[RMDB]
RNA sequence: GGGAACGACUCGAGUAGAGUCGAAAACGGAGAACCUUUGUGUCAUAACGCAACAGCACCGGUUGCUUGACACGAGGUUACGAUGUAGUAGUGCUGCUAGGCUCCGCACUGCCGAGAAGCUUCGGUGACACCACAACAUAUUCGUAUGUUGUGGUGUAAAAGAAACAACAACAACAAC
Reactivity to DMS in 0.01 (KOAc 150mM, MgCl2 10mM, bicine 150mM(pH8.5), 24C), signal-to-noise 8, nucleotides 027 to 126: c020g010g000a300g000a040a010c000c000u000u010u040g030u000g000u000c000a050u020a070a090c220g000c010a010a010c000a110g000c060a040c070c070g000g000u010u000g000c000u000u000g000a010c000a000c010g000a010g000g000u000u000a030c050g000a220u040g000u010a080g010u010a050g010u010g020c020u010g010c060u020a060g010g010c040u010c030c080g000c040a050c040u010g010c020c020g000a090g000a090a110g000c080u010u000c010g000g010u010g000
Reactivity to 2A3 in 0.01 (KOAc 150mM, MgCl2 10mM, bicine 150mM(pH8.5), 24C), signal-to-noise 5, nucleotides 027 to 126: c020g020g010a060g020a020a010c000c000u020u050u300g020u000g000u000c010a010u020a140a030c080g000c000a000a000c000a030g070c020a030c010c030g030g010u010u010g000c000u010u040g000a010c000a000c000g010a000g000g000u000u010a060c010g020a030u070g000u020a020g020u010a000g000u010g020c010u020g010c010u020a010g040g000c010u000c000c000g010c010a010c020u030g000c000c000g010a010g020a060a010g020c020u030u020c000g000g010u010g000

An RNA of 177 nucleotides, treated with DMS and 2A3 and read out base by base. Reactivities are given for positions 27 through 126. The 2A3 profile rests on 11,803 reads. 2A3 adducts were read by reverse transcription with SuperScript II with manganese. The RNA was probed in 150 mM KOAc, 10 mM MgCl2 and 150 mM bicine (pH 8.5) at 24 C.